[RMDB]
RNA sequence: GGGAACGACUCGAGUAGAGUCGAAAAGCUCGCACAAAGAAAGCCCGUGCACGUACAGUAGGUGCUUCCAGUUUCGUCGCAUCAACAGUUUUCAGAUUUCUUCACAAACCUGUAACCAUGCGCAUGGUCGACCAAGCCCAAAACAACAUUGGCCCACUCACCAUUACUGUUUCGACAGUAAUGGUGAAAAAGAAACAACAACAACAAC
Reactivity to 2A3 in 0.01 (KOAc 150mM, MgCl2 10mM, bicine 150mM(pH8.5), 24C), signal-to-noise 5, nucleotides 027 to 156: g040c030u040c030g040c030a060c040a040a120a060g080a150a110a010g060c020c010c030g020u050g020c040a030c060g060u110a090c030a130g090u140a070g040g080u050g030c000u040u000c030c020a110g010u000u050u110c060g040u040c030g000c020a040u030c030a050a060c010a050g010u020u030u080u090c020a040g030a110u090u080u040c060u130u130c060a020c070a100a070a030c010c010u020g030u080a050a040c020c010a060u080g010c030g010c050a040u050g040g000u020c020g010a030c020c020a060a020g030c000c030c020a030a080a020a040c070a030a000c000a030u030u110g020g000c020c000c000a050c030
Reactivity to DMS in 0.01 (KOAc 150mM, MgCl2 10mM, bicine 150mM(pH8.5), 24C), signal-to-noise 2, nucleotides 027 to 156: g080c010u000c040g050c070a140c040a130a120a170g000a090a130a080g010c020c010c040g050u000g010c020a080c080g000u000a090c090a140g020u000a080g020g000u000g020c030u010u000c040c020a120g020u000u000u000c050g010u000c060g040c030a050u010c030a050a080c060a080g010u000u010u010u010c000a030g000a080u010u000u010c050u000u000c100a100c080a030a040a060c010c010u070g010u010a040a070c000c020a060u010g010c020g040c070a100u000g040g000u000c000g050a090c020c050a010a170g000c000c030c040a000a010a100a130c040a080a040c020a150u010u010g000g000c000c010c020a050c300
Source information
An RNA of 207 nucleotides, treated with 2A3 and DMS and read out base by base. The reactions ran in a buffer of 150 mM KOAc, 10 mM MgCl2 and 150 mM bicine (pH 8.5), at 24 C. The 2A3 profile rests on 4,475 reads. Reactivities are given for positions 27 through 156.